RNA sequence: GGGAACGACUCGAGUAGAGUCGAAAAUCCUACUUCGGUAGGACAUGUUGCGUACUACCUGUGUACGACGACGACGACCUACCCACCGGAGUCCCAAAUAGGACUCCGAGGGUCGUCAUCAGUACCAGGUAUCGCUGAGCGCCACAUUCGUGUGGAAGCAUACAUGUAUUUUCGAAUACAUGUAUGCAAAAGAAACAACAACAACAAC
Reactivity to 2A3 in 0.01 (KOAc 150mM, MgCl2 10mM, bicine 150mM(pH8.5), 24C), signal-to-noise 4, nucleotides 027 to 156: u010c010c000u010a010c010u040u070c240g120g000u020a010g000g040a050c060a180u300g060u180u150g010c030g010u060a100c050u040a020c030c010u080g040u050g000u150a030c050g080a060c150g000a010c020g000a010c000g000a150c000c010u060a100c060c090c010a040c000c020g000g000a000g000u010c000c010c000a250a300a100u300a100g000g000a000c000u000c000c000g000a010g000g000g000u000c000g000u000c000a010u010c000a020g000u000a000c000c000a000g000g010u000a010u060c010g000c030u030g060a060g050c050g040c010c010a020c000a030u110u210c290g080u120g000u030g050g050a030a010
Reactivity to DMS in 0.01 (KOAc 150mM, MgCl2 10mM, bicine 150mM(pH8.5), 24C), signal-to-noise 4, nucleotides 027 to 156: u010c000c000u000a020c010u010u000c300g090g010u000a010g020g000a010c070a090u010g000u000u000g000c000g010u010a180c070u010a020c020c000u000g000u010g030u010a020c010g000a130c150g020a030c020g020a040c020g010a030c020c020u010a050c040c000c020a300c100c000g000g000a030g010u000c010c000c020a040a220a220u010a080g000g000a010c000u000c000c010g000a010g030g020g030u000c010g010u000c010a000u000c020a140g020u000a010c010c010a020g020g030u000a010u000c050g010c060u010g000a140g000c070g000c000c010a010c000a140u000u010c230g000u000g020u010g020g010a110a240